[RMDB]
RNA sequence: GGGAACGACUCGAGUAGAGUCGAAAAGCAGUUUCACUCACUGUAGACUCUGAGCGCAGAGUGUCAGUCGUGCUACCACAUGCACGUGAUCAGAGUAUGUGUGAACUCUGACUGACGUCACAAUCGCUUGUGACCUAUAUAAUGAAACUGGUGAGUCGUCCUCGGCUCGGUUCGCCGAGCCGAGGACAAAAGAAACAACAACAACAAC
Reactivity to 2A3 in 0.01 (KOAc 150mM, MgCl2 10mM, bicine 150mM(pH8.5), 24C), signal-to-noise 2, nucleotides 027 to 156: g070c000a000g000u020u000u000c020a010c050u000c020a050c020u000g010u050a030g010a000c000u000c000u020g050a090g210c120g020c030a020g020a000g000u010g000u000c000a010g000u000c020g020u000g010c020u100a130c010c050a040c010a020u030g000c000a000c080g060u170g050a100u180c050a030g040a000g040u020a040u060g190u040g040u060g080a050a020c010u000c010u050g000a000c000u000g000a000c000g000u020c000a000c000a010a080u210c100g040c160u000u050g000u000g000a010c000c000u000a000u030a090u000a020a050u030g000a000a000a010c000u000g100g070u070g030a050g050u070c090